[RMDB]
RNA sequence: GGGAACGACUCGAGUAGAGUCGAAAAGAUUAUGUGGGAGAUGCGCCCGGUCGUGUCACUGGAAACAGAAUUGCGAGUCGCUCGCACUAGCGAUAUUGAUGUGUACUGUAGCGUACACUGUGCUACUUUAAGGUAUGAUGACGAUACCACGUCAAAAGCCGGAUAUACGAUUCGUCGUAUAUCCGGCAAAAGAAACAACAACAACAAC
Reactivity to 2A3 in 0.01 (KOAc 150mM, MgCl2 10mM, bicine 150mM(pH8.5), 24C), signal-to-noise 1, nucleotides 027 to 156: g090a030u270u180a000u260g070u030g000g040g000a190g030a010u000g070c030g070c010c040c000g080g000u000c020g000u020g000u040c020a010c130u040g000g070a000a020a020c080a030g010a150a130u040u200g000c000g010a010g070u080c000g010c000u000c030g050c060a000c110u060a010g000c000g060a060u020a030u090u160g040a060u100g000u000g000u000a000c000u020g140u280a030g070c020g000u000a000c120a000c070u070g000u020g010c010u000a070c030u120u180u070a060a010g100g000u170a000u000g060a000u070g040a000c000g000a000u080a090c020c040a030c000g050u010c030a010a010a010a010